The record gives the reactivity of an RNA of 207 nucleotides to 2A3 and DMS.
The DMS profile rests on 1,159 reads.
The RNA was probed in 150 mM KOAc, 10 mM MgCl2 and 150 mM bicine (pH 8.5) at 24 C.
Reactivities are given for positions 27 through 156.

[RMDB]
RNA sequence: GGGAACGACUCGAGUAGAGUCGAAAAUCUGCUGAGUACCGAACGAUUGCUUCGAACCGUUAAAGGGAAUGUCGUACGCUUCAAGCACGAAUGGUGUAUUUCGAGAAUACAAACCCUGAAAGUACGUUAGGUCCGGCUUUCCUGAGAGAUAUGCAUCGCACUCUUCAUGGUUCGCCAUGAAGAGUGCAAAAGAAACAACAACAACAAC
Reactivity to 2A3 in 0.01 (KOAc 150mM, MgCl2 10mM, bicine 150mM(pH8.5), 24C), signal-to-noise 2, nucleotides 027 to 156: u010c000u080g000c000u010g000a000g020u120a030c000c010g000a020a030c040g110a140u140u100g050c020u090u040c040g070a110a060c050c050g050u100u240a100a140a080g050g000g010a100a130u130g040u040c030g010u050a090c090g020c010u050u160c130a110a130g160c030a000c030g040a060a100u060g050g000u050g010u030a100u010u070u110c200g010a070g100a000a000u010a000c020a000a130a050c000c000c000u040g040a160a000a000g040u050a010c000g010u040u020a020g010g000u000c000c000g000g000c000u020u050u020c000c030u010g070a000g000a000g000a060u020a020u260g120c060a040u130c060
Reactivity to DMS in 0.01 (KOAc 150mM, MgCl2 10mM, bicine 150mM(pH8.5), 24C), signal-to-noise 1, nucleotides 027 to 156: u000c030u000g030c020u000g060a130g080u000a060c040c000g010a050a130c020g000a090u000u000g000c080u010u020c190g180a100a000c080c010g010u020u010a030a210a050g040g040g070a090a090u000g010u000c030g010u000a070c030g010c080u000u030c130a100a180g080c000a090c080g000a090a190u000g050g070u000g000u000a060u000u000u010c160g000a180g010a140a120u030a000c060a130a210a210c000c000c000u000g000a190a020a100g130u000a060c090g000u000u000a130g000g040u010c020c020g050g000c010u000u000u000c010c030u050g000a130g000a060g040a080u000a040u010g030c040a220u000c040